[RMDB]
RNA sequence: GGGAACGACUCGAGUAGAGUCGAAAAAGAUCGAUUACGAUCGAUCAAUGAUGCCCCUCACCCACCUCUGAAGAUCCCAGGUGGGCGAGGGAACGGAGCACGGAAUCACGAGCAGUACGCUGCUCGAAAAAGAACUAGACCUUCGGGUCUAGUUCAAUCGUAUCUAGUUGUUCGCAACUAGAUACGAAAAAGAAACAACAACAACAAC
Reactivity to DMS in 0.01 (KOAc 150mM, MgCl2 10mM, bicine 150mM(pH8.5), 24C), signal-to-noise 1, nucleotides 027 to 156: a120g030a020u000c010g020a090u000u000a130c300g010a060u000c000g000a010u000c000a060a090u000g020a130u000g040c060c000c000c000u010c010a050c000c000c000a010c000c030u000c000u000g010a130a150g000a230u000c020c000c020a090g000g000u000g010g000g030c000g000a020g000g000g020a000a020c000g060g000a220g020c060a210c000g000g000a110a130u000c040a300c040g000a120g000c030a080g070u020a100c300g060c000u000g000c000u000c050g000a020a040a040a110a170g020a000a000c040u020a020g000a020c000c020u020u020c300g040g000g000u000c000u000a000g020u010u000c000a030a090
Reactivity to 2A3 in 0.01 (KOAc 150mM, MgCl2 10mM, bicine 150mM(pH8.5), 24C), signal-to-noise 3, nucleotides 027 to 156: a000g000a000u000c000g000a000u040u060a100c220g030a030u000c000g000a000u030c020a010a100u210g070a050u150g070c010c020c000c020u020c010a030c010c000c010a000c010c010u020c080u120g140a200a130g070a270u100c060c030c000a000g000g000u000g010g000g000c000g000a000g000g000g000a030a020c070g100g030a030g030c060a020c150g040g130a080a090u100c060a050c080g000a000g000c010a010g000u020a030c170g010c110u000g000c000u000c000g010a000a000a000a000a000g000a000a000c000u000a000g000a000c000c000u040u080c220g140g000g000u000c000u000a000g000u000u000c000a000a000

This 207-nucleotide RNA was probed chemically with DMS and 2A3. DMS adducts were read by reverse transcription with MarathonRT. The reactions ran in a buffer of 150 mM KOAc, 10 mM MgCl2 and 150 mM bicine (pH 8.5), at 24 C.